[RMDB]
RNA sequence: GGGAACGACUCGAGUAGAGUCGAAAAGUUCGCAUGGUGCACUAUUGUGUUAUUAGUAACUAAGUAAGCUUACAAUCGAAAAUGUUUAACCAUAAAAGGGUAAAAUGGUGUAAGAUAGUCUGAUACUUUACGGCUUCACGUUUCGACGUGAAGCCAACUACAUAGAGGGUUUCGACCCUCUAUGUAGAAAAGAAACAACAACAACAAC
Reactivity to DMS in 0.01 (KOAc 150mM, MgCl2 10mM, bicine 150mM(pH8.5), 24C), signal-to-noise 2, nucleotides 027 to 156: g020u000u000c070g030c070a300u020g020g010u000g040c050a080c030u000a080u000u000g050u000g010u010u000a040u000u000a110g010u010a050a100c040u000a100a140g000u000a080a150g000c010u000u010a020c030a080a080u000c050g030a100a140a060a090u010g010u010u000u000a070a050c030c010a030u010a090a110a140a190g000g020g030u000a030a040a050a100u000g020g060u000g010u010a040a050g060a070u010a070g010u000c030u000g010a110u000a040c040u000u000u010a070c160g030g000c020u000u000c010a000c000g020u000u000u000c240g030a080c000g000u010g010a030a000g030c000c000a010a000
Reactivity to 2A3 in 0.01 (KOAc 150mM, MgCl2 10mM, bicine 150mM(pH8.5), 24C), signal-to-noise 2, nucleotides 027 to 156: g050u040u110c060g000c120a060u080g040g020u020g080c000a010c050u020a100u100u180g030u010g000u050u020a030u040u020a070g040u040a020a090c040u030a210a020g090u030a120a070g070c010u000u060a050c050a040a150u090c040g110a070a080a020a020u070g050u060u120u110a040a000c000c000a000u150a050a140a060a070g030g010g010u110a010a010a040a040u110g010g000u030g020u050a010a060g030a060u050a000g100u010c070u050g020a040u020a220c000u090u050u060a050c140g030g000c000u050u000c030a010c000g000u020u020u120c210g050a020c000g000u010g010a000a000g000c000c000a000a000